About this RNA: Structure probing data (2A3 and DMS) for a 177-nucleotide construct. The reactions ran in a buffer of 150 mM KOAc, 10 mM MgCl2 and 150 mM bicine (pH 8.5), at 24 C. For DMS the reverse transcriptase was MarathonRT. Source: RMDB libraries RFM100 and RFMREP, as collected in RNAgym. For 2A3, 3,184 sequencing reads were counted.
RNA sequence: GGGAACGACUCGAGUAGAGUCGAAAAUGAUAACCAUCCUUGCUCCCCGUGCCUACUCGGGCUGUGGGCGACACCAUGGCUGCCCUGGGCUGGGCCAGUUGGGCCAUUGCCUGGGGACUGAGGGCAAUGCUUUAGAGAUCUUCGGAUCUCUAAAGCAAAAAGAAACAACAACAACAAC
Reactivity to 2A3 in 0.01 (KOAc 150mM, MgCl2 10mM, bicine 150mM(pH8.5), 24C), signal-to-noise 3, nucleotides 027 to 126: u120g050a030u090a080a070c030c040a040u060c010c030u020u060g040c020u040c000c000c000c040g110u060g040c000c000u070a140c010u050c060g030g040g000c030u030g000u050g000g020g020c060g030a020c020a020c050c010a010u010g010g000c020u030g050c030c000c000u000g000g000g000c020u020g010g010g000c000c020a130g080u160u140g060g010g000c000c020a110u050u110g000c000c000u000g000g000g000g010a010c010u020g020a080g010g010g000c000a010a100
Reactivity to DMS in 0.01 (KOAc 150mM, MgCl2 10mM, bicine 150mM(pH8.5), 24C), signal-to-noise 3, nucleotides 027 to 126: u030g030a080u010a050a110c140c050a110u010c040c040u010u000g010c130u000c030c000c000c110g020u010g010c030c020u010a110c040u030c040g020g000g000c020u020g060u010g000g000g000c080g040a150c180a110c020c020a040u030g010g000c010u010g020c000c010c000u020g030g020g010c000u020g020g000g000c000c010a120g010u010u030g000g000g020c000c010a090u010u010g010c000c010u000g020g000g020g020a030c030u020g010a060g000g000g000c060a070a080